[RMDB]
RNA sequence: GGGAACGACUCGAGUAGAGUCGAAAAAGAAAAGGAUAUGGAGCAGAACUACUAGCCCAAGCACGAAGAACUUCUUCGGAAACGAAGAAGGGAGUGCUUGCAUCUAGCUGCUCCUAAGUCGGCCAUACCUUGUAAGUUCGUUCGCGAACUUACAAGGAAAAGAAACAACAACAACAAC
Reactivity to DMS in 0.01 (KOAc 150mM, MgCl2 10mM, bicine 150mM(pH8.5), 24C), signal-to-noise 2, nucleotides 027 to 126: a130g010a040a050a110a100g020g000a080u010a300u000g040g010a010g020c030a020g000a110a080c080u000a300c020u000a000g030c300c300c010a000a010g000c000a010c000g000a110a180g000a100a130c000u000u000c010u000u000c010g000g000a080a020a110c040g000a000a010g000a020a030g000g000g000a050g000u000g000c000u000u000g000c220a070u000c020u010a000g020c000u000g000c050u000c010c000u000a000a040g000u000c030g010g000c040c050a050u010a210
Reactivity to 2A3 in 0.01 (KOAc 150mM, MgCl2 10mM, bicine 150mM(pH8.5), 24C), signal-to-noise 1, nucleotides 027 to 126: a000g120a000a080a000a060g220g000a030u030a060u230g000g010a020g030c020a020g010a080a030c150u250a030c010u030a300g000c000c000c000a000a000g000c000a000c020g160a300a090g070a040a000c000u000u040c000u010u000c020g000g050a080a000a000c030g020a000a000g010a000a000g080g000g030a000g000u010g000c000u000u000g000c000a070u060c020u010a000g010c000u000g000c000u000c000c010u010a020a030g010u010c020g000g080c040c020a030u130a210

Structure probing data (DMS and 2A3) for a 177-nucleotide construct. Conditions: 150 mM KOAc, 10 mM MgCl2 and 150 mM bicine (pH 8.5), 24 C. DMS adducts were read by reverse transcription with MarathonRT. Source: RMDB library TTRDES, as collected in RNAgym. The DMS profile rests on 1,051 reads.